[RMDB]
Description:
Chemical mapping of a 177-nucleotide RNA with DMS. For DMS the reverse transcriptase was MarathonRT. Conditions: 150 mM KOAc, 10 mM MgCl2 and 150 mM bicine (pH 8.5), 24 C.

RNA sequence: GGGAACGACUCGAGUAGAGUCGAAAAGCACCGCCGCAGUGCAGCCAACCCCCAACCGCACACACGCUGCCCGAGCCUGCUACUGUCGCAGUCUUACCCGGUCCGGGGCCGGACCCGGGUAGGCGUACACUAGUCACCGGUUCGCCGGUGACUAGUGAAAAGAAACAACAACAACAAC
Reactivity to DMS in 0.01 (KOAc 150mM, MgCl2 10mM, bicine 150mM(pH8.5), 24C), signal-to-noise 1, nucleotides 027 to 126: g050c100a090c030c040g000c070c050g030c060a110g000u000g060c030a060g000c010c100a080a210c000c000c020c020c050a130a050c040c060g070c070a050c120a070c040a080c110g000c020u000g000c010c020c010g010a170g000c010c040u000g000c060u010a080c070u000g000u010c140g050c130a090g020u020c000u000u000a030c000c010c000g000g000u000c010c010g030g030g050g020c160c010g040g010a050c080c030c030g020g000g000u000a000g000g040c020g000u010a090